[RMDB]
Structure probing data (2A3) for a 207-nucleotide construct. The reactions ran in a buffer of 150 mM KOAc, 10 mM MgCl2 and 150 mM bicine (pH 8.5), at 24 C.

RNA sequence: GGGAACGACUCGAGUAGAGUCGAAAAGAGGAGAUCAAGAAGUCCUACUGAUCAAACAUGCGCUUCCAAUAGUAGAAGGACGUUAAGCAUUUAUCAUUGAACUAUAAUUGUUCAUUGAAGUCAUUGAUGCAAACUCCUUGGUCACACACACAUACGGGUCGUAAAUGGACUUCGGUCCAUUUACGACAAAAGAAACAACAACAACAAC
Reactivity to 2A3 in 0.01 (KOAc 150mM, MgCl2 10mM, bicine 150mM(pH8.5), 24C), signal-to-noise 2, nucleotides 027 to 156: g080a020g090g020a090g000a030u040c030a000a030g050a050a000g030u020c040c040u110a110c130u020g040a050u050c060a020a130a040c060a040u130g010c130g050c080u080u020c010c050a060a130u070a090g100u050a040g090a120a020g030g020a020c060g020u110u130a130a040g010c010a000u000u000u120a090u090c000a000u030u000g000a010a000c020u030a040u130a300a180u300u080g000u000u000c010a000u000u000g040a060a050g060u070c100a090u080u100g010a030u020g050c000a000a060a120c020u010c020c020u040u010g030g020u060c020a010c010a000c010a010c020a010c020a080u140a190c110g140g050